RNA sequence: GGGAACGACUCGAGUAGAGUCGAAAACGCGCUACCGCCGGUGAUUGCCGGCGCGCUGGUGGCAACCUAUGGCAGCUGGGCGAUCGGUGUCAUGCUGGCCAUCCUCGCGUUGAUCAGCCUGGUAUGCACGCAUAUAGCCGUUCGCGGCUAUAUGCGUAAAAGAAACAACAACAACAAC
Reactivity to 2A3 in 0.01 (KOAc 150mM, MgCl2 10mM, bicine 150mM(pH8.5), 24C), signal-to-noise 1, nucleotides 027 to 126: c080g030c000g000c030u020a020c070c040g000c030c050g060g010u080g100a300u190u300g020c000c010g020g000c010g010c020g010c020u010g000g010u010g080g020c000a030a000c020c000u090a190u160g060g000c010a030g030c040u050g000g000g000c000g020a030u070c040g020g030u000g000u080c040a070u080g010c060u110g040g010c010c040a080u120c040c000u070c010g000c000g100u010u020g000a030u020c040a080g050c000c000u040g000g020u130a220u120g010c090
Reactivity to DMS in 0.01 (KOAc 150mM, MgCl2 10mM, bicine 150mM(pH8.5), 24C), signal-to-noise 1, nucleotides 027 to 126: c170g040c020g000c030u000a030c120c000g030c000c030g000g040u000g020a120u010u030g010c060c000g030g010c010g000c160g010c090u000g000g000u000g000g000c030a080a080c030c030u000a080u000g010g020c030a050g000c050u000g030g000g000c050g010a050u000c040g030g020u010g010u000c110a050u000g010c050u010g020g020c090c040a050u000c030c040u000c080g000c080g020u010u000g000a080u000c010a100g010c000c010u010g000g010u000a050u010g010c050
Structure probing data (2A3 and DMS) for a 177-nucleotide construct. For DMS the reverse transcriptase was MarathonRT. It was measured as part of the RMDB library OK2TRN. Reactivities are rounded to 0.1 and cut off at 0 and 3. For DMS, 1,484 sequencing reads were counted. For 2A3, 1,213 sequencing reads were counted. Reactivities are given for positions 27 through 126.